[RMDB]
RNA sequence: GGGAACGACUCGAGUAGAGUCGAAAAAAUUGAUGCAAGGUGUGGAGCGACCUUAAACAGUUCUGGUGGUGCUCUGAAUGGAAUGCUCUACUGAGAUUAUAAAAUAGAAGGUAAGCUAUUAUCUCUUAAAACGCAAUAGAGUUCGCUCUAUUGCGAACACGGAUGUGAUGUUCGCAUCACAUCCGUGAAAAGAAACAACAACAACAAC
Reactivity to 2A3 in 0.01 (KOAc 150mM, MgCl2 10mM, bicine 150mM(pH8.5), 24C), signal-to-noise 1, nucleotides 027 to 156: a000a020u190u190g070a080u050g050c040a000a020g000g000u020g050u090g100g000a030g000c090g000a020c000c050u070u040a070a040a000c040a110g040u130u030c050u020g000g060u000g020g000u040g020c000u000c000u050g030a070a060u030g000g020a130a000u090g040c000u000c030u080a080c030u050g010a000g010a060u050u100a040u180a120a150a050a020u070a060g070a020a000g080g030u070a080a000g010c040u000a070u130u010a040u050c020u030c000u050u110a080a060a020a000c000g000c000a000a000u010a000g000a020g000u000u070c060g050c080u000c000u000a000u000u000g020c000g000a000a000